[RMDB]
RNA sequence: GGGAACGACUCGAGUAGAGUCGAAAAACCGGCCCAAGCUCGGGUUCCCGGUCCCGAUCCGGCAUUGGCUGCGUGCCGGCGAGCUGCUGGAGUGGGCGUAUGCGACGGUGGGCUCGUCGCAGGCCGGCGCUCUCUUAUCGUUCGCGAUAAGAGAGCGAAAAGAAACAACAACAACAAC
Reactivity to DMS in 0.01 (KOAc 150mM, MgCl2 10mM, bicine 150mM(pH8.5), 24C), signal-to-noise 2, nucleotides 027 to 126: a160c090c020g010g010c000c010c070a130a130g010c070u000c040g030g020g020u000u010c050c000c010g000g010u010c020c010c000g020a080u000c020c010g030g020c010a120u000u000g020g010c020u000g010c110g000u000g030c060c020g010g010c040g010a030g020c060u010g000c030u010g010g000a080g020u020g000g010g010c080g010u010a090u000g000c030g000a050c010g000g020u010g010g010g000c080u000c000g000u000c020g000c040a040g010g010c030c000g010g010
Reactivity to 2A3 in 0.01 (KOAc 150mM, MgCl2 10mM, bicine 150mM(pH8.5), 24C), signal-to-noise 2, nucleotides 027 to 126: a010c020c010g040g040c000c020c030a070a030g040c030u050c060g020g000g000u050u030c020c000c010g010g010u070c040c010c000g030a070u050c000c000g010g000c030a070u070u240g080g000c020u050g050c080g230u140g090c070c010g010g000c010g010a020g010c030u050g000c030u050g010g030a110g030u160g000g050g000c030g080u170a140u190g020c050g020a030c030g020g000u070g040g080g000c000u030c010g010u000c000g020c000a000g000g020c010c010g000g000
Overview: The record gives the reactivity of an RNA of 177 nucleotides to DMS and 2A3. Conditions: 150 mM KOAc, 10 mM MgCl2 and 150 mM bicine (pH 8.5), 24 C. DMS (dimethyl sulfate) methylates the pairing face of unpaired adenines and cytosines. Source: RMDB library OK2TST, as collected in RNAgym. Reactivities are given for positions 27 through 126. Reactivities are rounded to 0.1 and cut off at 0 and 3. The DMS profile rests on 2,606 reads.